An RNA of 207 nucleotides, treated with 2A3 and DMS and read out base by base. Source: RMDB library OK3TST, as collected in RNAgym. For 2A3 the reverse transcriptase was SuperScript II with manganese. DMS adducts were read by reverse transcription with MarathonRT. Reactivities are given for positions 27 through 156. The reactions ran in a buffer of 150 mM KOAc, 10 mM MgCl2 and 150 mM bicine (pH 8.5), at 24 C.
[RMDB]
RNA sequence: GGGAACGACUCGAGUAGAGUCGAAAAGGGCUUGACGCAUCGCCCGAAUACGAUGCAUGUGCUUUUGCACUAAGAUAAAUGUCCGUAUUGUAGGGGACCUAGAACCUACUCAUUAAUGUCCGAAGAGUCUGGGACGAUCAUCAGGCAAGACUAAGAAGCUAGUCAUAGUGUUCGCACUAUGACUAGCAAAAGAAACAACAACAACAAC
Reactivity to 2A3 in 0.01 (KOAc 150mM, MgCl2 10mM, bicine 150mM(pH8.5), 24C), signal-to-noise 3, nucleotides 027 to 156: g060g020g000c020u050u030g040a020c050g020c020a020u010c010g010c000c040c040g000a030a010u070a030c040g010a010u060g000c030a030u070g020u000g020c000u150u160u300u300g000c000a000c010u080a110a040g070a080u150a090a170a070u170g000u050c000c010g010u030a080u060u070g030u000a010g000g000g010g020a020c010c030u020a020g070a070a020c020c020u020a020c010u000c030a000u070u220a170a100u150g040u040c000c040g040a130a030g000a020g050u000c000u060g010g070g050a050c010g010a070u090c040a020u020c000a010g030g000c010a090a000g020a060c020u080a090a040g050a080a000
Reactivity to DMS in 0.01 (KOAc 150mM, MgCl2 10mM, bicine 150mM(pH8.5), 24C), signal-to-noise 1, nucleotides 027 to 156: g010g000g000c000u000u000g000a090c090g020c060a020u000c040g020c030c030c190g000a100a030u000a060c030g040a030u000g020c000a110u000g030u030g000c000u010u000u000u010g000c020a070c020u020a060a180g010a100u010a030a150a100u000g030u010c150c030g010u010a070u000u000g000u000a090g060g020g010g000a140c090c000u000a140g000a090a170c010c000u000a040c020u000c130a140u000u010a040a070u020g000u010c010c030g010a140a130g010a130g000u000c000u000g020g030g000a100c030g000a110u000c080a100u030c000a030g010g040c000a070a120g010a190c000u000a050a110g000a200a300